RNA sequence: GGGAACGACUCGAGUAGAGUCGAAAAGCCUGCCUGCGCGGGGUGCGGCCAGGGGUGAACCUGCCGUUGCUGCACGCCGAGCGGCUGGUCGGCGUGCUCGGCAUCACCGGCGCGCCGGAGGUGGUCACUAAUCCGCAUGGUUCGCCAUGCGGAUUAGAAAAGAAACAACAACAACAAC
Reactivity to DMS in 0.01 (KOAc 150mM, MgCl2 10mM, bicine 150mM(pH8.5), 24C), signal-to-noise 1, nucleotides 027 to 126: g010c000c000u000g000c040c010u000g040c020g020c020g000g000g000g000u000g000c100g010g000c040c120a130g000g000g000g040u000g000a140a190c050c050u010g000c060c080g000u010u010g010c020u000g010c020a020c030g000c010c010g020a030g010c000g030g010c090u010g000g010u000c030g010g000c010g030u000g000c020u000c030g000g000c070a160u010c180a120c040c040g000g010c010g000c000g030c010c060g000g010a040g010g010u000g010g000u010c100a170
Reactivity to 2A3 in 0.01 (KOAc 150mM, MgCl2 10mM, bicine 150mM(pH8.5), 24C), signal-to-noise 1, nucleotides 027 to 126: g040c040c020u050g080c150c020u100g010c010g020c000g000g000g000g000u010g070c000g000g060c140c060a070g060g060g000g110u290g130a130a150c030c030u030g040c070c010g300u110u090g000c000u040g030c000a010c000g220c000c010g020a050g040c090g040g050c090u070g050g050u040c000g000g000c000g010u030g060c120u130c160g000g020c040a110u090c040a010c000c000g190g000c010g020c000g000c010c000g000g010a020g000g000u070g050g040u050c020a000